[RMDB]
RNA sequence: GGGAACGACUCGAGUAGAGUCGAAAAGAUAUGGAGACGGCCCGAUAAGAAUCAAUCGGAAACGAUUGAAUUCUUUUGACGGACGUCUCCUAAGUCAAACUAUAUCGCUCUUCGGAGCGAUAUAGAACAUAUAGUCCUAGUUCGCUAGGACUAUAUGAAAAGAAACAACAACAACAAC
Reactivity to DMS in 0.01 (KOAc 150mM, MgCl2 10mM, bicine 150mM(pH8.5), 24C), signal-to-noise 9, nucleotides 027 to 126: g000a040u000a270u000g010g000a020g000a010c000g000g000c030c000c000g000a160u000a010a010g000a010a010u000c000a000a000u000c000g010g000a090a070a140c000g010a010u000u000g000a050a070u000u000c000u000u000u010u000g000a300c300g000g000a020c000g000u000c000u000c000c000u000a000a050g000u000c020a110a090a300c000u000a000u000a000u000c000g000c000u000c000u000u010c220g020g000a010g010c000g000a000u000a000u000a000g010a060a170
Reactivity to 2A3 in 0.01 (KOAc 150mM, MgCl2 10mM, bicine 150mM(pH8.5), 24C), signal-to-noise 3, nucleotides 027 to 126: g000a020u040a020u070g000g010a000g000a010c010g020g010c030c010c010g060a140u140a190a010g000a000a000u000c000a010a000u010c000g000g030a060a030a010c030g010a000u010u010g010a040a130u010u010c000u040u220u110u090g030a010c000g000g010a000c000g000u000c000u020c000c000u000a010a000g000u000c010a070a000a000c000u000a000u000a000u000c000g000c010u010c000u050u120c300g150g000a000g000c000g000a000u000a000u000a000g000a010a000